An RNA of 207 nucleotides, treated with 2A3 and read out base by base. For 2A3 the reverse transcriptase was SuperScript II with manganese. Values are in units of 0.01, from 0 to 300, in steps of 10. For 2A3, 321 sequencing reads were counted.

RNA sequence: GGGAACGACUCGAGUAGAGUCGAAAAGGAAUGCAUAUCGGUUAUGAUGCUUUCCCUAGUGGAGUUUUCAGUCUGUGAGGAAGAUAACAUCAACAAAAAAAAACCCACUCAUCAUUCAACAGAUAUUUACCACCUAUAGUUUUCCAGGCAUUGUAACCAUCUGUGCCUACUUCGGUAGGCACAGAUGAAAAGAAACAACAACAACAAC
Reactivity to 2A3 in 0.01 (KOAc 150mM, MgCl2 10mM, bicine 150mM(pH8.5), 24C), signal-to-noise 1, nucleotides 027 to 156: g030g030a220a090u180g060c060a060u130a010u120c040g000g040u070u050a010u110g020a020u030g000c000u110u070u000c040c000c040u030a010g000u000g010g050a210g040u080u050u030u080c030a050g020u070c020u110g100u160g100a050g080g070a140a060g060a100u190a100a050c000a110u190c060a030a050c130a070a080a080a000a000a000a000a000a000c000c000c000a000c010u060c010a040u000c010a010u100u150c070a100a080c030a030g060a060u080a090u140u140u070a150c010c080a060c020c000u060a060u070a190g040u000u000u220u000c040c040a020g020g000c030a030u040u080g030u040a000a000c000
Overview: Reactivities are given for positions 27 through 156.